[RMDB]
RNA sequence: GGGAACGACUCGAGUAGAGUCGAAAACUGGGCGCUGUCGGCCGGCCAUAUCGAUACGAUCCUGCUGGUCGCCAUCUCGCAGCUGCUGCUUGGUAUCGGCUAUGCCAUGACCUAUCCGUCCAUUAAGCAUAAUAUGGCGCUUCGGCGCCAUAUUAUGAAAAGAAACAACAACAACAAC
Reactivity to DMS in 0.01 (KOAc 150mM, MgCl2 10mM, bicine 150mM(pH8.5), 24C), signal-to-noise 3, nucleotides 027 to 126: c060u030g000g000g010c050g030c030u020g010u030c040g030g010c000c000g020g000c040c170a300u020a050u010c030g000a150u060a080c100g010a030u020c300c050u050g000c030u010g000g020u020c010g000c010c070a010u040c030u000c030g010c050a090g010c110u040g000c030u010g010c050u000u000g020g020u010a070u020c080g020g020c070u000a150u000g000c000c010a030u020g000a070c050c020u000a040u020c090c020g000u000c090c000a060u020u030a050a110g000
Reactivity to 2A3 in 0.01 (KOAc 150mM, MgCl2 10mM, bicine 150mM(pH8.5), 24C), signal-to-noise 4, nucleotides 027 to 126: c030u020g000g020g000c030g000c030u050g020u090c040g060g020c010c010g000g010c000c030a080u060a030u070c120g060a110u080a300c100g010a020u070c000c030u040g020c010u030g010g050u030c020g040c020c000a110u080c040u040c040g010c020a030g010c010u070g000c000u000g030c000u020u070g040g010u040a070u080c040g020g020c040u050a030u190g030c000c020a030u070g020a060c000c000u020a030u070c000c010g050u000c020c010a010u090u110a060a000g030
Chemical mapping of a 177-nucleotide RNA with DMS and 2A3. For DMS, 3,426 sequencing reads were counted. For 2A3, 3,294 sequencing reads were counted. For DMS the reverse transcriptase was MarathonRT.